[RMDB]
RNA sequence: GGGAACGACUCGAGUAGAGUCGAAAAGAUGUCAAUAGGUAAGCCUAUAUCUGUUGGCACUACAGGCACUAUGUCGCAUCAUGGUCCCUGUGAACUCGAAGCUUGAUGCGACAAGUUUUGAGUGAUCUAAGACACUAUAGGCUUAGUUUUUUAGAGACGAGACCAGAAUGUUCGCAUUCUGGUUUCGAAAAGAAACAACAACAACAAC
Reactivity to DMS in 0.01 (KOAc 150mM, MgCl2 10mM, bicine 150mM(pH8.5), 24C), signal-to-noise 3, nucleotides 027 to 156: g010a040u000g010u000c020a030a050u010a010g010g020u000a030a060g020c020c020u000a040u000a010u000c020u010g010u000u000g000g000c030a060c040u010a080c070a060g020g030c140a060c030u000a050u000g010u010c110g000c070a080u000c020a030u010g010g050u000c050c000c030u010g020u010g010a120a050c030u000c030g020a030a050g010c030u000u000g010a110u000g030c180g020a100c000a000a020g010u000u000u000u000g010a050g020u000g000a150u000c030u010a060a180g000a080c040a080c050u000a070u000a050g010g020c020u000u000a070g010u000u000u030u000u000u000a060g010a150g000a300
Reactivity to 2A3 in 0.01 (KOAc 150mM, MgCl2 10mM, bicine 150mM(pH8.5), 24C), signal-to-noise 2, nucleotides 027 to 156: g050a060u020g010u020c020a000a030u000a030g030g000u010a030a010g020c000c000u000a010u000a000u010c020u010g020u010u030g000g010c000a000c020u090a070c020a030g020g000c030a020c030u080a040u120g020u020c020g010c020a040u030c000a000u040g030g000u030c010c000c030u040g020u010g070a070a020c030u010c020g010a030a000g030c000u000u020g010a010u050g050c020g060a010c000a000a000g000u020u000u020u070g030a030g000u020g050a040u000c010u070a070a010g010a010c010a000c010u020a010u010a010g000g000c000u010u010a000g010u000u000u010u000u000u070a040g010a000g030a060
This 207-nucleotide RNA was probed chemically with DMS and 2A3. 2A3 adducts were read by reverse transcription with SuperScript II with manganese. Values are in units of 0.01, from 0 to 300, in steps of 10. Conditions: 150 mM KOAc, 10 mM MgCl2 and 150 mM bicine (pH 8.5), 24 C.